[RMDB]
RNA sequence: GGGAACGACUCGAGUAGAGUCGAAAACAAUUGAGCGUCGCACACACACAGACUAAGUCUGACACUGACAGAGCCUAAACGGCUCUGUCAGUGUGCGAGAUAUCGUUCUUAAUGUGAGCAGAGGAAAGCUACCUGUGAGUUUCGACUCACAGGUAGCAAAAGAAACAACAACAACAAC
Reactivity to 2A3 in 0.01 (KOAc 150mM, MgCl2 10mM, bicine 150mM(pH8.5), 24C), signal-to-noise 1, nucleotides 027 to 126: c000a000a020u140u090g060a010g080c030g020u010c040g020c030a010c000a000c000a000c000a000c000a000g010a040c050u130a190a060g010u060c010u000g100a010c010a010c040u020g020a000c020a010g030a000g000c050c060u260a300a300a000c130g030g000c040u070c010u020g000u000c010a010g000u000g000u000g000c030g010a030g030a000u080a020u060c040g080u170u000c010u080u050a160a070u130g080u080g060a080g000c110a060g010a040g020g120a110a010a030
Reactivity to DMS in 0.01 (KOAc 150mM, MgCl2 10mM, bicine 150mM(pH8.5), 24C), signal-to-noise 1, nucleotides 027 to 126: c090a010a180u020u040g030a080g040c030g010u000c080g020c040a090c040a000c090a050c250a160c280a060g000a010c000u000a070a230g000u000c010u010g000a040c070a000c060u010g000a000c000a000g000a010g000c000c000u000a030a060a100c300g000g000c000u000c000u000g000u000c010a000g000u000g000u010g010c060g020a000g000a090u000a120u000c100g040u010u000c070u010u000a180a110u000g000u000g000a030g070c030a060g010a070g010g000a130a020a100
Structure probing data (2A3 and DMS) for a 177-nucleotide construct.
The reactions ran in a buffer of 150 mM KOAc, 10 mM MgCl2 and 150 mM bicine (pH 8.5), at 24 C.
For DMS the reverse transcriptase was MarathonRT.
The 2A3 profile rests on 701 reads.